The record gives the reactivity of an RNA of 177 nucleotides to DMS and 2A3. The RNA was probed in 150 mM KOAc, 10 mM MgCl2 and 150 mM bicine (pH 8.5) at 24 C.
[RMDB]
RNA sequence: GGGAACGACUCGAGUAGAGUCGAAAACGACAGACGUUCGCGUCUGUCGAAAUACCGAGGUUGUUGCUCGGUAAAUAACAACAACCCUUCGAAACAAGGGAAAAAGGAGAUGGUUCGCCAUCUCCAACUUUUAUAACGAGUUCGCUCGUUAUAAAAGAAAAGAAACAACAACAACAAC
Reactivity to DMS in 0.01 (KOAc 150mM, MgCl2 10mM, bicine 150mM(pH8.5), 24C), signal-to-noise 4, nucleotides 027 to 126: c020g010a020c010a000g000a010c010g020u000u010c190g040c020g020u000c000u000g010u000c000g000a020a080a130u000a130c010c000g010a030g000g020u010u010g000u000u010g020c010u000c010g020g010u000a020a050a050u010a080a070c040a050a050c110a070a100c010c000c020u000u000c070g000a110a110a150c300a010a000g010g000g000a030a040a070a100a110g000g000a010g020a010u000g000g010u010u000c210g010c000c000a000u000c000u010c000c000a010a010
Reactivity to 2A3 in 0.01 (KOAc 150mM, MgCl2 10mM, bicine 150mM(pH8.5), 24C), signal-to-noise 2, nucleotides 027 to 126: c000g000a010c000a000g010a010c000g030u050u040c200g030c000g090u010c020u000g000u010c000g000a000a000a000u080a000c000c000g000a000g040g000u060u040g020u070u050g030c000u000c010g000g000u010a000a030a020u020a010a010c030a000a010c010a010a040c000c020c000u000u000c060g160a120a050a060c040a020a050g020g010g020a060a010a000a030a070g010g010a000g000a010u000g000g020u040u070c170g030c090c000a000u020c000u020c000c000a000a000
DMS (dimethyl sulfate) methylates the pairing face of unpaired adenines and cytosines.
For 2A3 the reverse transcriptase was SuperScript II with manganese.